[RMDB]
RNA sequence: GGGAACGACUCGAGUAGAGUCGAAAAGAGAAACCUCACCUUAGGGGUAACAGGUCUGUUGAGGAGACCAGUGCAAGUCGGGGCAGUGGUAAGUAGAUUCCGGAGCAUUGUUCCGGGUAGAUUUAGCACUUCGAACCAUAUUCGUAUGGUUCGAAGUAAAAGAAACAACAACAACAAC
Reactivity to 2A3 in 0.01 (KOAc 150mM, MgCl2 10mM, bicine 150mM(pH8.5), 24C), signal-to-noise 4, nucleotides 027 to 126: g040a000g020a030a130a030c020c010u020c020a110c010c030u020u090a040g000g040g000g010u030a060a030c050a030g030g040u000c010u020g040u120u130g130a070g030g060a060g020a000c030c020a010g010u020g010c070a080a000g040u060c020g020g000g040g000c010a030g040u030g040g050u080a110a050g040u020a040g030a110u210u000c000c000g010g010a020g000c140a210u100u290g050u030u040c000c000g000g010g010u010a000g010a040u020u060u110a040g030c030
Reactivity to DMS in 0.01 (KOAc 150mM, MgCl2 10mM, bicine 150mM(pH8.5), 24C), signal-to-noise 3, nucleotides 027 to 126: g010a090g010a090a130a060c020c010u010c060a190c120c050u020u020a120g020g020g020g010u010a050a090c080a100g010g000u000c040u000g010u000u010g020a080g010g020a070g000a040c040c050a090g000u050g000c040a030a060g030u020c040g000g010g020g000c060a080g000u000g000g030u000a000a090g000u010a040g000a060u010u030c010c010g010g000a010g030c040a190u030u040g010u020u010c000c000g000g030g000u010a020g000a110u020u010u030a050g000c100